The data come from the RNA Mapping Database (RMDB), libraries RFM100 and RFMREP. Structure probing data (DMS and 2A3) for a 177-nucleotide construct. The RNA was probed in 150 mM KOAc, 10 mM MgCl2 and 150 mM bicine (pH 8.5) at 24 C.

[RMDB]
RNA sequence: GGGAACGACUCGAGUAGAGUCGAAAACCAGCAGCCGCGGUAAUUCCAGCUCCAGGAGUGUCAUAGUGCAUUGCUGCAUUUAAAAGGUCCGUAGUCAGUGUUGACAGGGAUGCUAGAAGACACUUUCAAAUCCUCCUCUAUUCGUAGAGGAGGAUUUAAAAGAAACAACAACAACAAC
Reactivity to DMS in 0.01 (KOAc 150mM, MgCl2 10mM, bicine 150mM(pH8.5), 24C), signal-to-noise 7, nucleotides 027 to 126: c010c010a150g010c060a050g000c040c050g020c060g010g000u010a070a090u000u010c030c030a080g000c050u000c080c040a100g000g000a030g010u010g000u000c030a100u020a070g020u000g010c010a050u010u030g010c160u000g010c020a050u010u000u010a060a080a120a080g000g010u000c010c020g000u020a110g010u000c010a050g010u030g020u050u010g010a040c020a150g000g010g000a020u000g010c020u010a090g000a120a090g000a070c120a020c000u000u000u010c070
Reactivity to 2A3 in 0.01 (KOAc 150mM, MgCl2 10mM, bicine 150mM(pH8.5), 24C), signal-to-noise 6, nucleotides 027 to 126: c010c000a020g060c030a000g020c000c030g040c030g010g030u040a030a050u130u090c010c020a020g030c030u030c030c010a040g040g030a040g030u010g000u020c040a070u070a170g060u060g050c010a010u050u190g070c080u030g010c040a020u060u130u160a050a100a020a010g050g010u020c020c030g030u080a050g010u040c040a030g040u040g080u300u150g070a040c010a020g050g010g000a020u050g100c010u030a030g020a090a010g000a020c000a000c000u010u030u030c020